[RMDB]
Conditions: 150 mM KOAc, 10 mM MgCl2 and 150 mM bicine (pH 8.5), 24 C. Structure probing data (2A3 and DMS) for a 177-nucleotide construct. For 2A3 the reverse transcriptase was SuperScript II with manganese. For DMS the reverse transcriptase was MarathonRT.

RNA sequence: GGGAACGACUCGAGUAGAGUCGAAAACUUUGCGAUGCUUGUUACAGGAGAAGUGUCCGGUUCGAUCCCUGCGUGGGUUAUCCACGGCGGAAGCGGCUUGAGUAAUCAGCCUUCGACCGCCAGCUAAGUUGUAACCGGAGUUCGCUCCGGUUACAACAAAAGAAACAACAACAACAAC
Reactivity to 2A3 in 0.01 (KOAc 150mM, MgCl2 10mM, bicine 150mM(pH8.5), 24C), signal-to-noise 3, nucleotides 027 to 126: c010u130u140u200g030c160g050a010u040g000c000u030u120g070u120u140a110c090a100g050g210a120g110a100a000g040u030g020u040c020c020g000g000u000u040c020g050a060u040c050c040c000u060g000c060g020u000g020g080g070u220u040a030u120c000c000a000c040g000g000c010g000g000a000a000g080c020g040g000c010u070u180g040a000g020u220a030a110u060c020a000g040c000c000u030u130c020g020a020c000c000g000c000c010a000g030c050u030a160a040
Reactivity to DMS in 0.01 (KOAc 150mM, MgCl2 10mM, bicine 150mM(pH8.5), 24C), signal-to-noise 2, nucleotides 027 to 126: c000u000u050u050g040c060g020a070u000g000c040u000u010g000u020u020a060c250a100g040g000a060g010a040a040g010u000g000u010c020c000g000g000u000u010c120g000a040u010c000c010c010u010g000c090g000u000g020g000g010u020u020a020u020c000c000a150c000g050g030c000g040g000a030a130g010c300g000g000c000u000u000g040a000g030u130a110a080u000c030a050g000c060c010u000u050c050g000a220c040c000g030c000c020a090g110c180u040a140a040